This 177-nucleotide RNA was probed chemically with 2A3. For 2A3, 482 sequencing reads were counted. It was measured as part of the RMDB library OK1LIB.
RNA sequence: GGGAACGACUCGAGUAGAGUCGAAAAACAUUUUAUUUGAUAAACAGACGUGGCCAUUCAAACAAAUUUUAUUACCAUUGCUAUAUCAACGUGAUAGUGGUGGAGGUAGUAUGCCUUCAGGUUUAACCCGGAUGCUCUAAUUCGUUAGAGCAUCCGGAAAAGAAACAACAACAACAAC
Reactivity to 2A3 in 0.01 (KOAc 150mM, MgCl2 10mM, bicine 150mM(pH8.5), 24C), signal-to-noise 2, nucleotides 027 to 126: a010c050a030u090u170u070u110a090u020u080u270g110a200u200a240a140a040c160a040g090a070c100g060u080g120g000c000c140a020u100u140c090a000a120a120c070a060a100a100u090u290u170u070a280u110u140a090c010c000a010u040u000g000c090u050a070u040a020u270c030a140a050c100g150u200g060a020u000a000g080u000g000g060u000g000g040a000g050g050u020a110g000u000a020u060g000c040c000u000u000c020a060g050g010u040u130u090a000a030c000